[RMDB]
RNA sequence: GGGAACGACUCGAGUAGAGUCGAAAACGACCUUAAACAGUUCUGGUGGUGCUCUGAACGGAGUGCUCUACUGAGAUUAUAAAAUAGAAGGUAAGCUAUUAUCUCUUACAACAGGGCAGGGCUUGUUAAAAGCCUUUCAGUUUCGACUGAAAGGCAACGGUCAGAUUAAGUUCGCUUAAUCUGACCGAAAAGAAACAACAACAACAAC
Reactivity to 2A3 in 0.01 (KOAc 150mM, MgCl2 10mM, bicine 150mM(pH8.5), 24C), signal-to-noise 2, nucleotides 027 to 156: c060g040a030c000c010u100u110a020a150a030c030a030g010u090u030c030u050g070g000u030g020g040u050g030c000u020c010u030g130a130a040c060g050g010a030g010u030g020c010u030c090u080a080c060u100g020a040g010a030u070u060a040u200a150a140a110a000u100a060g050a090a000g090g020u070a050a000g070c060u020a040u100u060a030u080c050u000c060u050u070a120c010a180a020c020a060g030g010g010c010a000g000g020g000c010u050u040g000u070u050a020a120a030a040g000c000c050u000u010u000c000a000g000u010u040u150c170g040a010c000u000g000a000a000a000g000g000c000a000a010